Source: RMDB library 15KREP, as collected in RNAgym. This 177-nucleotide RNA was probed chemically with DMS and 2A3. DMS adducts were read by reverse transcription with MarathonRT. The reactions ran in a buffer of 150 mM KOAc, 10 mM MgCl2 and 150 mM bicine (pH 8.5), at 24 C.
RNA sequence: GGGAACGACUCGAGUAGAGUCGAAAAUGCACCCUGGGACCCAGUAAUACCCGGGGGGAGGCGGGGUUAACCCAUACUAUGGGAACUGCUGGGUUCCUCGGAUGUCGAUCCCCUCUCCCGUUCGGGACCUAUUACUUAUGUUCGCAUAAGUAAUAGGAAAAGAAACAACAACAACAAC
Reactivity to DMS in 0.01 (KOAc 150mM, MgCl2 10mM, bicine 150mM(pH8.5), 24C), signal-to-noise 5, nucleotides 027 to 126: u020g010c090a090c020c000c030u010g000g000g000a030c010c010c000a040g010u010a060a100u010a290c000c000c000g010g010g010g010g010g000a040g020g000c180g010g000g010g010u010u010a130a150c020c010c010a050u000a110c160u000a060u010g000g000g010a100a050c130u000g000c040u000g000g000g000u000u000c000c010u000c190g000g010a060u020g010u000c100g000a120u000c010c000c000c110u000c040u000c000c000c000g000u000u000c050g010g010g010a230
Reactivity to 2A3 in 0.01 (KOAc 150mM, MgCl2 10mM, bicine 150mM(pH8.5), 24C), signal-to-noise 4, nucleotides 027 to 126: u070g010c010a030c010c000c010u000g000g000g000a000c000c000c010a000g010u010a010a070u050a140c000c000c000g010g010g010g020g010g000a020g040g080c090g000g020g010g010u070u170a080a090c000c000c020a010u100a130c120u120a080u160g000g000g030a050a020c040u040g000c000u010g000g010g000u010u010c010c000u000c000g020g010a090u040g060u090c030g020a080u040c000c000c000c000u000c000u000c000c000c000g010u060u040c020g000g000g010a000